[RMDB]
RNA sequence: GGGAACGACUCGAGUAGAGUCGAAAAGUCGACAAGAGAUCUUCGAAUGACUCCGUCUUCUCAAGUUGAAGAAUCAACUAGUAGGGAUCAAAUAUUCGAAAUUGAUCACCCCGAACACGAGGAAGAAAUAUAGCGUGAGUUUCGACUCACGCUAUAUAAAAGAAACAACAACAACAAC
Reactivity to 2A3 in 0.01 (KOAc 150mM, MgCl2 10mM, bicine 150mM(pH8.5), 24C), signal-to-noise 1, nucleotides 027 to 126: g050u030c020g030a080c070a260a040g040a020g010a180u020c000u030u040c060g050a050a000u040g010a010c050u000c030c020g040u020c030u130u020c040u000c030a040a010g010u000u020g070a130a100g140a260a300u050c000a010a020c000u020a010g060u080a020g040g040g000a020u030c030a020a080a050u140a060u030u060c000g080a010a040a040u030u050g010a010u000c020a080c030c000c010c010g030a070a010c080a020c020g000a070g030g100a020a080g080a130a210
Reactivity to DMS in 0.01 (KOAc 150mM, MgCl2 10mM, bicine 150mM(pH8.5), 24C), signal-to-noise 2, nucleotides 027 to 126: g000u010c070g000a100c160a040a090g000a140g000a070u000c040u000u000c040g000a070a030u000g000a080c070u000c100c250g000u000c010u000u000c020u010c020a140a060g000u020u000g000a080a150g000a180a140u000c010a000a040c010u010a050g030u010a090g020g000g000a000u000c060a040a060a070u030a080u000u000c160g020a090a050a070u020u000g000a010u000c020a220c060c020c020c030g010a090a070c120a090c110g000a050g000g010a130a080g000a040a120

Conditions: 150 mM KOAc, 10 mM MgCl2 and 150 mM bicine (pH 8.5), 24 C. The record gives the reactivity of an RNA of 177 nucleotides to 2A3 and DMS. For DMS, 1,325 sequencing reads were counted. For 2A3, 989 sequencing reads were counted. High 2A3 reactivity points to a flexible backbone, as in loops and unpaired stretches.